[RMDB]
RNA sequence: GGGAACGACUCGAGUAGAGUCGAAAAUCAGCUCCAGAGUAGCGGGGGUUGGAAAUCCCUCGUGAAUGUGGCAGGCAUCGACUGCCAAGACUAAGUACUCUCCGAGACCGAUAGUGAACAAGUAGUGCUUGUAGUUGUUUUUCGAAACAACUACAAGAAAAGAAACAACAACAACAAC
Reactivity to 2A3 in 0.01 (KOAc 150mM, MgCl2 10mM, bicine 150mM(pH8.5), 24C), signal-to-noise 9, nucleotides 027 to 126: u070c010a020g040c010u000c020c010a010g010a010g040u020a000g000c010g000g010g000g000g010u050u100g100g070a020a050a050u080c000c000c000u000c000g010u010g040a090a070u220g020u050g070g000c010a000g030g000c040a120u100c120g110a100c020u000g000c000c000a010a010g020a010c030u050a060a010g030u030a030c010u010c000u000c050c050g030a030g040a090c020c010g050a060u060a070g150u150g100a110a040c050a150a030g080u140a020g060u090g110
Reactivity to DMS in 0.01 (KOAc 150mM, MgCl2 10mM, bicine 150mM(pH8.5), 24C), signal-to-noise 8, nucleotides 027 to 126: u010c050a110g010c030u000c010c170a060g000a060g010u000a090g020c020g010g010g000g000g020u000u010g010g030a090a130a100u010c010c000c000u010c010g020u000g000a070a120u030g020u000g000g010c010a010g010g010c060a120u030c170g010a170c020u000g000c000c010a040a050g010a110c090u000a040a070g020u010a030c020u000c010u000c120c170g000a050g010a080c070c020g010a050u010a080g000u010g010a110a080c130a050a080g010u020a070g010u010g010